[RMDB]
RNA sequence: GGGAACGACUCGAGUAGAGUCGAAAACGUGGAGUUUUUCCCAGCUCCGACGGGAUGGCGCUCGUGACUAGGUCCGCCGCCUUGUAUCAUACGAGCGUGUGUAUACCCGUGCGACCCAAGGCGGCGGAAUUUUGGAAGAAUUCGUUCUUCCAAAAUUAAAAGAAACAACAACAACAAC
Reactivity to DMS in 0.01 (KOAc 150mM, MgCl2 10mM, bicine 150mM(pH8.5), 24C), signal-to-noise 9, nucleotides 027 to 126: c190g020u020g010g000a020g010u000u000u020u010u000c000c000c000a300g000c000u000c000c010g010a040c010g010g000g010a090u010g010g000c000g010c000u000c000g010u000g010a130c240u030a110g010g010u010c000c000g010c000c000g010c000c000u000u000g010u010a070u020c140a090u010a020c010g000a010g010c010g030u000g010u020g010u020a120u030a270c000c000c000g010u000g010c120g000a160c100c080c000a020a010g000g010c000g000g000c000g000g000
Reactivity to 2A3 in 0.01 (KOAc 150mM, MgCl2 10mM, bicine 150mM(pH8.5), 24C), signal-to-noise 9, nucleotides 027 to 126: c040g050u140g010g000a020g010u020u020u030u120u000c000c000c000a000g000c000u000c000c000g040a020c010g000g020g030a150u230g170g000c010g000c000u000c000g030u040g060a130c110u110a080g120g060u010c000c000g000c000c000g000c000c000u010u000g090u060a210u160c120a120u100a140c000g000a000g010c020g010u030g000u010g020u050a090u090a250c000c000c000g000u020g020c050g040a050c020c010c000a000a000g000g000c000g000g000c000g000g000